[RMDB]
Record summary
This 177-nucleotide RNA was probed chemically with 2A3. Reactivities are rounded to 0.1 and cut off at 0 and 3. The data come from the RNA Mapping Database (RMDB), library OK1LIB. 2A3 adducts were read by reverse transcription with SuperScript II with manganese.

RNA sequence: GGGAACGACUCGAGUAGAGUCGAAAAACCGUCGAGUACCAAGAGAAGGUACACGACGGAAUCACAACAUCUCAGUUGUGGAAAUCGUUUGGACACGAUAAAAGUCCUGAAAUCAAGGAAACUUGAAGGUGUGUACUGACUUCGGUCAGUACACACCAAAAGAAACAACAACAACAAC
Reactivity to 2A3 in 0.01 (KOAc 150mM, MgCl2 10mM, bicine 150mM(pH8.5), 24C), signal-to-noise 2, nucleotides 027 to 126: a000c000c050g000u000c000g000a000g070u000a000c000c000a240a000g130a000g110a300a220g030g000u000a000c030a000c000g000a000c060g000g000a000a040u010c010a010c010a020a030c060a150u150c060u020c230a140g000u000u000g030u000g000g020a000a200a000u040c000g000u010u020u020g000g000a040c040a000c200g020a000u090a160a140a000a000g020u020c000c010u030g030a010a090a000u080c020a000a000g000g080a100a000a090c000u000u040g000a040a000